[RMDB]
RNA sequence: GGGAACGACUCGAGUAGAGUCGAAAAAACGUUGCAUGAUCGUAAAACAUGCCCGGCUUACCGUGAGCCGCCUUUGAAAGAAAGGAUUACACGGACUCUGUUGCGUUACGCACGUACCUAACUUGUGAAAACGGCAUCUUGUUCGCAAGAUGCCGAAGUUAGAUGAAAGCUUCGGCUUUCAUCUAACAAAAGAAACAACAACAACAAC
Reactivity to DMS in 0.01 (KOAc 150mM, MgCl2 10mM, bicine 150mM(pH8.5), 24C), signal-to-noise 2, nucleotides 027 to 156: a150a070c030g010u000u000g030c000a010u010g000a070u000c000g030u000a040a050a020a010c070a050u000g030c010c030c000g030g010c010u010u000a080c050c020g050u000g000a110g020c020c010g040c000c000u000u010u020g040a130a070a300g000a060a040a030g020g020a300u000u000a180c020a040c070g000g040a210c140u000c060u010g000u000u010g010c000g030u000u000a080c090g000c060a060c080g040u000a050c050c060u010a100a070c050u000u020g000u030g000a110a070a080a150c030g010g000c000a010u000c000u010u010g010u000u000c300g000c020a030a040g000a020u000g000c000c000g010a010a010
Reactivity to 2A3 in 0.01 (KOAc 150mM, MgCl2 10mM, bicine 150mM(pH8.5), 24C), signal-to-noise 4, nucleotides 027 to 156: a000a000c000g000u010u000g000c000a000u000g020a060u200c040g070u250a070a000a100a000c000a000u000g000c000c000c000g000g010c000u030u110a110c000c010g000u000g010a000g000c000c000g020c000c000u040u010u010g070a080a050a000g030a000a010a000g020g000a000u040u100a060c000a000c020g010g000a010c070u110c040u130g120u140u030g030c020g050u070u060a080c230g020c030a010c030g020u080a070c010c050u060a110a190c050u100u070g050u060g180a070a060a020a040c010g010g000c000a000u000c010u000u020g020u050u030c090g030c100a000a000g000a000u000g000c000c000g000a000a000